[RMDB]
RNA sequence: GGGAACGACUCGAGUAGAGUCGAAAAGAAAAAGCGGAAGUGGCGAAAUCGGUAGACGCAGUUGAUCAAAGAUCAACCGUAGUAAUACGUGCUGGUUCGAGUCCAGCCUUCCGCACCGAAAAAAAAACUACAUAAUACCCUUCGGGGUAUUAUGUAGAAAAGAAACAACAACAACAAC
Reactivity to 2A3 in 0.01 (KOAc 150mM, MgCl2 10mM, bicine 150mM(pH8.5), 24C), signal-to-noise 1, nucleotides 027 to 126: g040a010a130a010a000a000g000c010g010g000a000a000g010u000g000g000c010g030a010a030a030u270c090g150g130u110a010g010a030c010g000c010a010g000u020u000g010a010u040c120a300a230a110g020a020u000c000a000a050c000c030g000u010a010g030u040a030a160u020a030c000g010u010g000c000u000g000g000u030u030c000g000a000g010u000c000c020a010g010c000c000u010u010c000c000g000c010a000c010c000g010a100a000a020a000a000a000a000a000a040
Reactivity to DMS in 0.01 (KOAc 150mM, MgCl2 10mM, bicine 150mM(pH8.5), 24C), signal-to-noise 2, nucleotides 027 to 126: g020a070a070a080a150a150g030c010g000g010a020a010g020u000g020g000c000g000a010a010a000u030c230g010g030u000a020g010a300c010g000c010a120g000u000u000g010a010u010c000a110a140a170g000a030u000c010a020a000c000c000g000u000a000g010u020a100a090u000a000c000g000u000g010c000u000g000g000u000u000c010g000a300g000u000c000c020a000g010c000c010u000u000c010c010g040c010a050c040c010g020a000a000a020a020a040a040a050a060a130
Description:
The record gives the reactivity of an RNA of 177 nucleotides to 2A3 and DMS. Source: RMDB library M2PK90, as collected in RNAgym. For 2A3 the reverse transcriptase was SuperScript II with manganese. The DMS profile rests on 1,378 reads.